[RMDB]
RNA sequence: GGGAACGACUCGAGUAGAGUCGAAAAGCGAUAAUAGCGGCGCGCAUAGCGAUAGCGGCGCGCAUAGCGUAUGCGUAUAUAGCGUAUGCGUAUCGCUAUGCGAUAGCGGCGUAUAUAGCGUAUUAUCAGCUGCCCGUGUAUUCGUACACGGGCAGCUAAAAGAAACAACAACAACAAC
Reactivity to 2A3 in 0.01 (KOAc 150mM, MgCl2 10mM, bicine 150mM(pH8.5), 24C), signal-to-noise 1, nucleotides 027 to 126: g080c020g050a040u030a090a000u030a000g000c150g000g040c040g000c000g010c000a090u050a040g010c010g020a000u040a020g130c130g080g020c000g030c000g000c040a020u020a000g000c000g030u230a090u180g070c040g060u030a040u000a030u030a200g040c100g060u060a120u190g010c000g010u010a000u050c000g030c010u010a000u000g000c080g030a020u060a030g010c050g090g000c000g100u020a000u020a040u120a120g030c010g020u000a100u060u030a060u080c080

This 177-nucleotide RNA was probed chemically with 2A3. For 2A3, 959 sequencing reads were counted. For 2A3 the reverse transcriptase was SuperScript II with manganese. The data come from the RNA Mapping Database (RMDB), library OK2TRN. The RNA was probed in 150 mM KOAc, 10 mM MgCl2 and 150 mM bicine (pH 8.5) at 24 C.